The data come from the RNA Mapping Database (RMDB), library M2RFPK.
Structure probing data (DMS and 2A3) for a 207-nucleotide construct.
DMS adducts were read by reverse transcription with MarathonRT.

[RMDB]
RNA sequence: GGGAACGACUCGAGUAGAGUCGAAAACGGAAGCAUUAAAACCAUUAGAGCUAGUCAAUGCGUGGCGUGUCUCUCCGCAGCGUGUUGGCGAAUGUAAAGAGUGACUAAGCAUGUAGUACCGAGGAUGAUAAGAGCAAUUCGUUCGCGAAUUGCUCAACGUGAAACGGUAGUUCGCUACCGUUUCACGAAAAGAAACAACAACAACAAC
Reactivity to DMS in 0.01 (KOAc 150mM, MgCl2 10mM, bicine 150mM(pH8.5), 24C), signal-to-noise 2, nucleotides 027 to 156: c060g000g000a160a050g070c020a100u020u010a060a150a090a160c040c020a130u000u000a100g020a100g000c010u000a120g000u020c050a000a010u020g000c000g030u000g040g030c000g020u000g010u000c050u000c040u010c260c000g030c020a030g000c030g020u010g030u000u010g030g000c000g000a060a050u020g010u020a080a040a060g000a090g010u000g000a110c030u000a050a080g000c000a090u000g000u000a130g030u010a040c010c040g020a130g040g020a080u000g000a140u020a080a220g020a010g000c000a000a010u000u000c000g060u000u010c270g050c020g010a030a010u000u000g030c000u020c020a000a060
Reactivity to 2A3 in 0.01 (KOAc 150mM, MgCl2 10mM, bicine 150mM(pH8.5), 24C), signal-to-noise 2, nucleotides 027 to 156: c050g020g030a040a000g000c010a020u040u140a040a030a060a090c030c010a040u040u150a060g020a000g050c030u030a020g010u000c000a000a000u000g030c020g010u040g180g000c010g010u060g030u030c020u010c000u000c040c010g000c000a000g000c010g000u020g010u030u010g000g000c000g000a020a030u060g040u110a000a000a060g020a000g010u030g010a010c020u040a050a010g050c040a040u070g040u080a040g030u010a070c030c090g020a040g050g020a020u110g020a040u060a240a050g010a000g000c000a000a000u000u000c000g030u000u050c190g010c010g090a000a000u000u000g010c000u000c000a000a000